[RMDB]
RNA sequence: GGGAACGACUCGAGUAGAGUCGAAAAGUGGACGCUGCCUGGCCAGCGGCAGGCCGCCCUGCGCGUCAGGAACGGCGCCACCCGCGCCGUACGCGCUAUCUGGCGCGCCGGCCGGCGCGCGUCGCGACAUAAUAUGCGUAUUCGUACGCAUAUUAUGAAAAGAAACAACAACAACAAC
Reactivity to DMS in 0.01 (KOAc 150mM, MgCl2 10mM, bicine 150mM(pH8.5), 24C), signal-to-noise 6, nucleotides 027 to 126: g020u000g010g020a030c030g010c020u000g020c010c030u020g020g010c020c040a190g010c070g010g000c060a080g010g020c070c030g020c100c080c120u000g010c010g030c020g030u000c180a080g010g010a110a050c020g010g000c000g030c020c100a130c210c110c090g010c040g000c010c010g010u000a030c040g010c050g010c050u010a050u010c080u010g010g030c020g010c040g000c180c300g000g000c010c000g000g000c290g080c280g010c020g010u000c000g010c050g000a250
Reactivity to 2A3 in 0.01 (KOAc 150mM, MgCl2 10mM, bicine 150mM(pH8.5), 24C), signal-to-noise 3, nucleotides 027 to 126: g080u090g090g010a010c020g010c050u120g000c010c020u050g050g000c030c010a030g020c020g030g030c030a030g130g050c020c020g000c030c000c010u020g010c030g000c010g040u050c050a040g090g090a050a010c010g000g020c000g010c010c010a120c030c040c000g010c000g000c000c000g030u050a040c070g040c010g000c040u010a060u050c050u080g030g000c060g000c020g000c070c000g010g000c020c000g030g000c190g000c050g000c030g020u000c010g000c010g010a020